Conditions: 150 mM KOAc, 10 mM MgCl2 and 150 mM bicine (pH 8.5), 24 C. Chemical mapping of a 177-nucleotide RNA with 2A3 and DMS. The DMS profile rests on 4,450 reads.

[RMDB]
RNA sequence: GGGAACGACUCGAGUAGAGUCGAAAAGAUAUGGACUGUAACGAAUUAUAGACUCCUUGGACCACAUGUUUAAUCGGAAACGAUUAAACAUGUGCUAGGAGCCUAUAACUAUUACAGUCCUAAGUCAGUAAUAUAUAGCGUUCGCGCUAUAUAUUACAAAAGAAACAACAACAACAAC
Reactivity to 2A3 in 0.01 (KOAc 150mM, MgCl2 10mM, bicine 150mM(pH8.5), 24C), signal-to-noise 2, nucleotides 027 to 126: g070a010u100a090u170g010g010a000c010u000g000u030a050a030c090g050a300a290u060u010a010u010a020g000a020c000u020c010c010u050u130g110g130a170c210c000a000c010a000u000g010u000u000u020a010a000u000c010g000g040a110a070a040c000g000a010u010u010a000a010a000c010a000u000g000u000g000c010u000a000g010g000a010g020c000c000u000a000u000a000a000c010u010a000u020u010a010c020a000g000u020c000c000u010a010a000g050u000c080a010
Reactivity to DMS in 0.01 (KOAc 150mM, MgCl2 10mM, bicine 150mM(pH8.5), 24C), signal-to-noise 4, nucleotides 027 to 126: g010a060u000a300u000g010g000a010c010u000g000u010a000a010c080g010a090a100u000u000a010u000a010g020a010c000u000c000c000u000u010g020g000a220c300c020a010c010a010u010g010u000u000u000a000a010u000c010g000g000a110a120a220c000g010a020u000u000a000a010a000c000a000u000g010u000g010c050u000a010g000g010a030g010c000c000u000a010u000a000a010c100u010a250u000u000a000c000a000g020u000c000c000u000a010a060g000u000c040a090